The record gives the reactivity of an RNA of 177 nucleotides to DMS and 2A3. The DMS profile rests on 838 reads. For 2A3, 821 sequencing reads were counted.

RNA sequence: GGGAACGACUCGAGUAGAGUCGAAAAAGCAAGCGCACUCUGUGUCACAUUGAUUGACCUCAUGUGAAUACAAUUUGUAAGUUUGCCAGAGUAAGGUGUAGCUUCUUAUCCAUGUGAUUGGACUCCACCCUUACAGCGAGUUCGCUCGCUGUAAGGGAAAAGAAACAACAACAACAAC
Reactivity to DMS in 0.01 (KOAc 150mM, MgCl2 10mM, bicine 150mM(pH8.5), 24C), signal-to-noise 1, nucleotides 027 to 126: a050g000c040a020a060g090c020g000c070a030c030u010c060u010g020u020g030u010c000a010c000a030u020u010g030a020u020u010g000a180c300c230u000c020a030u000g020u000g000a030a070u020a050c020a000a060u000u000u000g040u010a120a190g010u020u000u000g000c030c040a040g000a120g000u000a070a060g000g010u010g010u000a120g010c070u010u000c030u000u000a110u000c000c010a010u000g000u000g010a070u010u000g000g000a080c030u000c000c050a140
Reactivity to 2A3 in 0.01 (KOAc 150mM, MgCl2 10mM, bicine 150mM(pH8.5), 24C), signal-to-noise 1, nucleotides 027 to 126: a000g060c010a020a000g060c000g020c000a000c000u020c020u010g000u000g010u000c000a060c010a090u140u210g030a090u110u100g030a050c000c020u010c000a010u000g010u030g030a010a020u110a060c040a050a130u040u180u110g150u080a280a300g070u070u080u050g060c000c000a040g040a020g180u110a150a040g080g040u060g010u040a000g000c020u050u050c000u080u040a040u010c000c020a040u090g060u060g110a080u130u000g000g000a010c010u020c040c010a010